[RMDB]
RNA sequence: GGGAACGACUCGAGUAGAGUCGAAAAGAAAUGGAUGUGAUGAUUAUUUCCCCAGAUGAACGACGUUGAUUAUACUGUGCUAUUUCUUUCUCUUUUUGAGAUUCCAAGCCAUUACUCUGAUCCAUAAGAGGCAUAUACGGUUCGCCGUAUAUGCCUCAAAAGAAACAACAACAACAAC
Reactivity to 2A3 in 0.01 (KOAc 150mM, MgCl2 10mM, bicine 150mM(pH8.5), 24C), signal-to-noise 2, nucleotides 027 to 126: g060a010a080a020u120g050g050a000u050g080u100g050a020u080g010a020u050u140a100u030u150u030c000c000c000c000a020g080a220u190g030a020a100c080g090a000c120g120u120u230g140a100u190u130a030u030a100c050u170g010u080g030c000u010a100u020u130u000c000u020u110u070c040u000c040u080u230u070u090u160g080a000g000a000u000u060c020c000a000a080g000c010c010a010u040u020a010c010u000c000u000g080a100u040c000c010a010u040a120a080
Reactivity to DMS in 0.01 (KOAc 150mM, MgCl2 10mM, bicine 150mM(pH8.5), 24C), signal-to-noise 2, nucleotides 027 to 126: g000a070a110a070u010g010g010a040u010g030u040g000a050u000g000a110u000u000a050u000u000u000c000c000c000c150a180g020a080u020g000a030a060c060g000a080c040g000u000u000g020a110u010u050a070u000a080c150u010g050u000g000c030u000a030u000u030u000c010u000u000u000c040u000c030u010u020u000u060u000g000a030g000a110u000u000c010c040a000a170g000c040c050a050u000u000a050c080u000c010u000g000a120u000c070c090a110u010a080a120